RNA sequence: GGGAACGACUCGAGUAGAGUCGAAAAAGCAAUAAUACAAUGAACGUGGACUGAGACGAACCAACAGCUGCAGGCGAGACGCAAAUAGGGUUCUUCAGCAGCGCGGGAGUGGCCAUAGAAGCGCAGGGAGCUUUUAUGAUUUCGAUCAUAAAAGCUCAAAAGAAACAACAACAACAAC
Reactivity to DMS in 0.01 (KOAc 150mM, MgCl2 10mM, bicine 150mM(pH8.5), 24C), signal-to-noise 5, nucleotides 027 to 126: a080g020c060a100a060u030a070a070u020a030c140a080a070u000g000a070a100c080g000u010g000g000a090c050u010g010a170g000a040c110g020a070a080c070c040a090a090c120a100g000c050u010g010c050a040g000g020c070g000a060g000a070c070g010c090a030a060a110u030a040g000g010g010u000u010c030u010u000c060a060g010c060a050g020c060g010c050g000g010g010a080g010u000g000g010c030c030a070u000a040g010a110a050g000c030g000c040a070g000g020
Reactivity to 2A3 in 0.01 (KOAc 150mM, MgCl2 10mM, bicine 150mM(pH8.5), 24C), signal-to-noise 7, nucleotides 027 to 126: a010g090c130a080a060u190a100a030u140a100c080a100a110u140g060a140a030c050g030u050g020g020a040c030u030g020a010g020a090c090g010a040a010c020c020a040a050c030a050g050c010u080g020c010a040g010g050c030g050a030g030a030c030g040c070a020a150a040u180a100g050g050g000u020u030c000u040u010c030a030g000c000a020g010c060g000c020g030g000g000a060g030u070g020g010c010c010a040u050a110g110a050a010g040c030g010c050a020g040g100
Chemical mapping of a 177-nucleotide RNA with DMS and 2A3. Conditions: 150 mM KOAc, 10 mM MgCl2 and 150 mM bicine (pH 8.5), 24 C. DMS (dimethyl sulfate) methylates the pairing face of unpaired adenines and cytosines. For 2A3 the reverse transcriptase was SuperScript II with manganese. Reactivities are rounded to 0.1 and cut off at 0 and 3. Reactivities are given for positions 27 through 126.